[RMDB]
RNA sequence: GGGAACGACUCGAGUAGAGUCGAAAAAGGUUAGUUAUAGCUACUCAACUCUGCCACCACCUUGCAAAGACAUCCAGUGCUUGAGUGGCACGGUGGCAUUCCAGCAGGACUUCACGUGGAGCACUGGUAUUCGUGAUCUUUUCGAAGAUCACGAAUAAAAAGAAACAACAACAACAAC
Reactivity to DMS in 0.01 (KOAc 150mM, MgCl2 10mM, bicine 150mM(pH8.5), 24C), signal-to-noise 4, nucleotides 027 to 126: a060g000g010u000u000a020g010u000u000a080u020a130g000c070u000a040c060u000c080a060a100c080u000c120u000g010c020c040a160c030c010a080c090c070u010u000g000c060a080a080a110g010a100c210a100u010c010c020a020g020u000g000c000u000u000g000a110g010u000g010g020c060a010c130g000g010u000g000g010c110a110u000u020c040c030a110g000c110a100g000g010a060c150u010u000c020a030c070g030u010g000g000a020g000c020a010c010u000g000g020
Reactivity to 2A3 in 0.01 (KOAc 150mM, MgCl2 10mM, bicine 150mM(pH8.5), 24C), signal-to-noise 2, nucleotides 027 to 126: a000g130g010u100u050a030g020u100u110a190u090a180g010c030u030a040c010u030c040a040a070c040u050c050u070g000c010c010a010c000c000a020c000c030u040u080g000c050a050a100a050g100a080c030a070u040c030c010a030g000u000g000c010u060u090g050a060g070u060g050g000c020a000c000g020g000u020g000g000c030a030u070u000c030c000a030g010c030a040g140g020a060c050u040u070c120a040c110g120u150g040g030a000g000c000a000c000u000g000g020
The record gives the reactivity of an RNA of 177 nucleotides to DMS and 2A3. 2A3 adducts were read by reverse transcription with SuperScript II with manganese. It was measured as part of the RMDB library OK2TST. The 2A3 profile rests on 2,558 reads. For DMS, 3,775 sequencing reads were counted.